[RMDB]
RNA sequence: GGGAACGACUCGAGUAGAGUCGAAAAGCGUACUACAAACGCCACCUCUUUCUUGGAUUUACUCAUCUCUAGCGUGACAUUUCCCAAAUAGGAAAUGUUCGGGUGAGUUGUCAGAAAGAGUUGGCGUUUGUAUCGCAAACACACGUUCGCGUGUGAACUGCUGCAAGAUGUUCGCAUCUUGCAGCAGAAAAGAAACAACAACAACAAC
Reactivity to 2A3 in 0.01 (KOAc 150mM, MgCl2 10mM, bicine 150mM(pH8.5), 24C), signal-to-noise 1, nucleotides 027 to 156: g000c050g030u070a120c050u000a000c080a060a000a000c000g000c020c000a000c000c060u080c000u050u040u000c000u030u090g230g000a160u300u130u220a080c000u000c010a040u040c060u040c040u270a150g300c080g300u230g100a010c000a010u000u000u040c000c010c010a250a300a170u300a030g000g020a000a000a000u000g000u010u010c030g000g040g000u000g000a000g030u000u000g000u020c000a000g020a000a000a000g030a000g010u010u000g030g000c000g010u000u000u000g000u000a000u000c000g000c000a000a140a000c000a010c000a000c000g000u040u040c220g000c000g110u000g000u030g010a050a040